RNA sequence: GGGAACGACUCGAGUAGAGUCGAAAACGCAAAAUAGCUGCCAUUGGAGUGCAGAUAUCACAUGGUGUCACGCGGCAUGGCGCUGCCCUGAAUGUGACAACGGAUCUGUCCUAUUUCUCGCACAUUGCCAAGGCGUAUGUUUCGACAUACGCCUUGGAAAAGAAACAACAACAACAAC
Reactivity to DMS in 0.01 (KOAc 150mM, MgCl2 10mM, bicine 150mM(pH8.5), 24C), signal-to-noise 2, nucleotides 027 to 126: c100g030c180a060a090a100a070u020a040g030c010u000g030c060c030a090u000u000g020g010a180g040u000g000c000a050g000a020u000a000u000c070a090c210a060u000g000g010u000g000u010c020a080c060g010c070g020g020c040a080u000g010g020c090g000c050u000g000c050c020c040u000g010a080a040u000g030u000g000a060c080a060a070c120g010g000a050u000c060u010g010u000c050c030u020a160u000u000u000c000u000c090g040c120a080c190a080u000u000g020
Reactivity to 2A3 in 0.01 (KOAc 150mM, MgCl2 10mM, bicine 150mM(pH8.5), 24C), signal-to-noise 3, nucleotides 027 to 126: c050g030c020a090a030a010a030u080a120g030c070u070g000c010c040a090u050u130g090g080a090g020u140g010c040a010g100a030u060a050u080c080a100c050a190u180g000g010u040g050u030c020a020c050g030c000g030g030c060a080u110g080g000c090g000c070u050g030c000c000c010u090g100a140a050u150g000u060g040a000c010a080a030c060g040g000a050u010c030u040g090u130c000c000u060a140u010u080u040c040u010c010g050c020a050c020a160u050u220g040